Background
Conditions: 150 mM KOAc, 10 mM MgCl2 and 150 mM bicine (pH 8.5), 24 C. Structure probing data (DMS) for a 177-nucleotide construct. For DMS the reverse transcriptase was MarathonRT. Values cover nucleotides 27 to 126. It was measured as part of the RMDB library OK2TRN.
RNA sequence: GGGAACGACUCGAGUAGAGUCGAAAAAUGAUGUUGUACUUAAUAUUAAUAAAGAUAUUCAAGAUCUUGCUAAGAAUGCUUUGGGUAAGAGGCACGGUUCUAUUGUUGUAUUAAAACCAUCAACAGGAGAAAUCAAUUGAUUCGUCAAUUGAUUUCUAAAAGAAACAACAACAACAAC
Reactivity to DMS in 0.01 (KOAc 150mM, MgCl2 10mM, bicine 150mM(pH8.5), 24C), signal-to-noise 1, nucleotides 027 to 126: a120u000g010a060u010g010u020u010g000u000a130c020u020u020a030a100u010a060u000u010a070a070u020a120a070a150g000a070u020a050u000u000c010a050a110g000a050u010c000u000u010g010c080u010a090a080g000a080a120u030g000c170u010u000u000g050g010g020u000a070a050g010a050g000g020c040a040c250g000g000u010u000c070u010a090u000u000g020u000u010g010u010a040u010u000a020a040a070a060c110c040a060u000c070a020a050c140a070g040g000